An RNA of 170 nucleotides, treated with DMS and 2A3 and read out base by base. The RNA was probed in 150 mM KOAc, 10 mM MgCl2 and 150 mM bicine (pH 8.5) at 24 C. For 2A3, 37,553 sequencing reads were counted. For DMS, 58,971 sequencing reads were counted. Source: RMDB library 15KLIB, as collected in RNAgym. For 2A3 the reverse transcriptase was SuperScript II with manganese.
[RMDB]
RNA sequence: GGGAACGACUCGAGUAGAGUCGAAAAUUUAACAUUUUGCAGGCGACAACUGCUAAUGUCAGUGCACUUAUGGGUGCUAAUGGCAACAAGAUUGUUGACAAAGAAGUUAAAGACAUGCAGUUUGAUUGAACCCUUAAGUUCGCUUAAGGGAAAAGAAACAACAACAACAAC
Reactivity to DMS in 0.01 (KOAc 150mM, MgCl2 10mM, bicine 150mM(pH8.5), 24C), signal-to-noise 9, nucleotides 027 to 129: u010u000u010a060a040c070a050u000u010u020u030g040c130a100g010g040c050g010a050c040a020a020c020u000g030c060u000a060a080u010g010u000c020a020g010u000g030c020a030c020u010u010a130u080g050g000g030u000g020c020u010a070a050u000g000g040c020a020a060c050a070a100g030a120u000u000g040u020u010g010a040c020a020a120a070g000a070a070g020u020u040a010a050a060g000a050c050a030u050g030c060a020g000u000u010u010g030a140u010u030g020a080a140
Reactivity to 2A3 in 0.01 (KOAc 150mM, MgCl2 10mM, bicine 150mM(pH8.5), 24C), signal-to-noise 9, nucleotides 027 to 129: u080u080u060a090a020c050a040u010u040u050u190g060c070a040g070g010c040g060a040c030a060a010c010u020g020c070u100a080a040u020g000u000c010a020g030u010g060c000a000c010u120u170a110u300g240g010g000u000g000c000u030a100a080u030g020g000c000a010a020c000a040a050g090a230u040u120g040u000u000g010a010c010a030a120a010g140a080a010g060u120u260a090a030a020g020a020c020a020u040g010c010a020g000u020u040u040g120a120u010u020g030a050a060